Chemical mapping of a 177-nucleotide RNA with 2A3 and DMS. Source: RMDB libraries RFM100 and RFMREP, as collected in RNAgym.
[RMDB]
RNA sequence: GGGAACGACUCGAGUAGAGUCGAAAAGGAUGUGGCAUCAUAUUACUAGCCAUCGCACGAAAUUAAUAGGAUGGCACGUCCUCAUCUUAGAUGGAACAACCACGUCAUCUCACGGGUGGAUCCAUUCUCUUGCACUGCUAUUCGUAGCAGUGCAAGAAAAAGAAACAACAACAACAAC
Reactivity to 2A3 in 0.01 (KOAc 150mM, MgCl2 10mM, bicine 150mM(pH8.5), 24C), signal-to-noise 4, nucleotides 027 to 126: g000g000a000u020g010u000g030g130c000a010u020c000a000u010a010u010u000a020c090u030a020g090c060c040a170u140c110g030c030a060c100g110a090a070a070u110u030a000a010u010a020g000g040a000u000g030g090c000a000c020g000u000c000c000u050c020a080u000c010u030u090a040g000a050u030g010g010a050a020c030a010a100c050c020a210c080g080u040c040a120u040c070u020c040a010c010g030g000g000u030g020g080a060u000c000c010a020u090u000c030
Reactivity to DMS in 0.01 (KOAc 150mM, MgCl2 10mM, bicine 150mM(pH8.5), 24C), signal-to-noise 3, nucleotides 027 to 126: g000g010a010u010g000u000g000g000c000a010u000c000a030u010a010u000u000a010c150u020a130g000c030c070a140u010c200g030c160a170c150g030a110a060a080u010u010a020a010u000a030g000g000a000u000g000g000c000a000c010g010u020c000c000u010c090a140u000c020u010u000a080g000a020u030g000g010a010a110c040a140a040c010c000a080c000g000u030c110a140u010c140u040c300a040c020g000g020g020u000g000g000a080u020c000c000a030u010u000c140
DMS adducts were read by reverse transcription with MarathonRT.
2A3 adducts were read by reverse transcription with SuperScript II with manganese.